Annotation:
The data come from the RNA Mapping Database (RMDB), library OK3TST. Structure probing data (2A3 and DMS) for a 207-nucleotide construct. For DMS, 1,643 sequencing reads were counted. 2A3 adducts were read by reverse transcription with SuperScript II with manganese. DMS adducts were read by reverse transcription with MarathonRT. The RNA was probed in 150 mM KOAc, 10 mM MgCl2 and 150 mM bicine (pH 8.5) at 24 C. High 2A3 reactivity points to a flexible backbone, as in loops and unpaired stretches.
[RMDB]
RNA sequence: GGGAACGACUCGAGUAGAGUCGAAAAAGGCGCGAACGUAUCGACGAACAUUUCGAGCCAAUUUGGUUCGCCGAACACAUCUGAACCAGGUAAGAACCGUUGCAUGUUUUCAGUGUUUAACCGGUCGUAUUGAAUGCAAAAGAUGUAAUGGCACAGACCGAUAGGAUCCUUUCGAGGAUCCUAUCGGAAAAGAAACAACAACAACAAC
Reactivity to 2A3 in 0.01 (KOAc 150mM, MgCl2 10mM, bicine 150mM(pH8.5), 24C), signal-to-noise 3, nucleotides 027 to 156: a000g010g010c020g010c000g030a020a010c030g040u110a100u270c110g120a070c060g030a150a030c040a070u090u130u020c010g000a020g010c010c050a030a070u130u050u090g080g010u030u060c070g000c020c020g080a180a010c080a000c010a090u020c010u030g040a020a020c030c040a090g000g070u060a080a060g000a110a040c000c010g020u030u020g010c090a040u040g040u050u120u060u300c100a050g000u020g040u020u070u130a060a010c050c030g000g030u060c020g010u050a080u120u170g090a100a010u060g030c040a010a000a020a200g010a030u040g000u060a090a070u110g010g010c030a000c040a060g070a020
Reactivity to DMS in 0.01 (KOAc 150mM, MgCl2 10mM, bicine 150mM(pH8.5), 24C), signal-to-noise 1, nucleotides 027 to 156: a110g010g020c030g020c030g000a090a070c070g030u000a040u010c130g010a140c050g010a100a010c040a100u000u000u000c040g000a130g000c130c090a050a140u000u000u000g010g020u000u020c020g030c040c040g030a140a150c060a060c010a100u010c020u000g010a090a130c030c040a160g010g000u000a090a120g040a100a100c020c000g020u000u000g010c030a040u000g000u010u000u010u000c120a170g000u000g000u000u000u010a030a020c040c030g010g050u000c100g050u010a280u000u000g010a040a060u000g020c000a080a100a070a050g000a020u000g000u000a040a000u000g010g030c040a070c040a120g030a300